[RMDB]
RNA sequence: GGGAACGACUCGAGUAGAGUCGAAAAACAAUAUGUAGAUACUUAGCAUCUCUUAUGCACAGUGGUUUUAUAUUUUUCUUGCUAUUCUACAGCUAAAGAUUUUAAGGAAAUAGCUCAAAUAUCCAAAACACAAAUCCUACUUGUGAAUAAUUUCACACGAUACUCGUGGAUUCGUCCACGAGUAUCGAAAAGAAACAACAACAACAAC
Reactivity to 2A3 in 0.01 (KOAc 150mM, MgCl2 10mM, bicine 150mM(pH8.5), 24C), signal-to-noise 2, nucleotides 027 to 156: a000c020a010a050u120a060u210g080u090a050g050a030u140a080c110u150u120a080g000c030a040u050c050u000c030u220u080a040u120g050c030a040c020a110g010u070g000g050u010u030u110u030a040u060a030u020u080u010u050u040c130u070u140g020c000u000a030u020u030c000u040a060c020a040g000c040u150a130a160a100g020a110u120u120u070u200a120a020g010g010a060a070a060u020a020g020c010u020c090a080a070a020u050a010u070c040c040a000a020a080a050c050a010c030a090a060a020u010c000c000u030a120c000u000u060g000u000g000a000a000u200a130a090u060u100u040c020a020c000a000
Source: RMDB library OK3TST, as collected in RNAgym. The record gives the reactivity of an RNA of 207 nucleotides to 2A3. Conditions: 150 mM KOAc, 10 mM MgCl2 and 150 mM bicine (pH 8.5), 24 C. Values cover nucleotides 27 to 156.